[RMDB]
This 177-nucleotide RNA was probed chemically with DMS and 2A3. For 2A3, 2,874 sequencing reads were counted. The DMS profile rests on 6,594 reads. The reactions ran in a buffer of 150 mM KOAc, 10 mM MgCl2 and 150 mM bicine (pH 8.5), at 24 C. Reactivities are rounded to 0.1 and cut off at 0 and 3.
RNA sequence: GGGAACGACUCGAGUAGAGUCGAAAAUAGUGCGUCAUUAAAGACCCCUGCGAAAAAUUGAUUUGGAGUGAAAUAAAUGGCAGCGCAAGGAGUCUUGCCAACACCUGAAUACAGCCGCAAUAUGCGGAUAAGAACGUAGUUUCGACUACGUUCUUAUAAAAGAAACAACAACAACAAC
Reactivity to DMS in 0.01 (KOAc 150mM, MgCl2 10mM, bicine 150mM(pH8.5), 24C), signal-to-noise 6, nucleotides 027 to 126: u010a090g020u000g000c040g010u000c060a090u010u000a150a190a160g010a040c020c010c010c030u010g000c030g000a030a080a110a220a080u000u010g000a070u000u000u010g030g010a130g010u010g000a060a030a030u010a040a050a050u000g000g010c190a070g020c040g010c020a060a050g010g010a090g010u000c010u000u000g010c040c040a140a060c050a080c030c030u000g000a080a090u000a100c180a090g010c000c000g000c010a090a110u010a100u010g010c000g000g010
Reactivity to 2A3 in 0.01 (KOAc 150mM, MgCl2 10mM, bicine 150mM(pH8.5), 24C), signal-to-noise 3, nucleotides 027 to 126: u100a010g040u060g030c020g030u030c070a120u090u170a160a060a030g010a020c010c000c010c000u030g010c030g070a070a060a060a120a140u060u110g030a070u100u030u100g140g070a160g020u140g060a070a050a060u060a020a060a000u020g010g020c050a050g020c110g010c030a010a030g030g000a040g030u020c000u060u060g000c000c000a030a010c020a050c030c010u010g030a040a010u150a130c060a030g060c020c000g000c020a010a080u170a140u300g000c010g000g030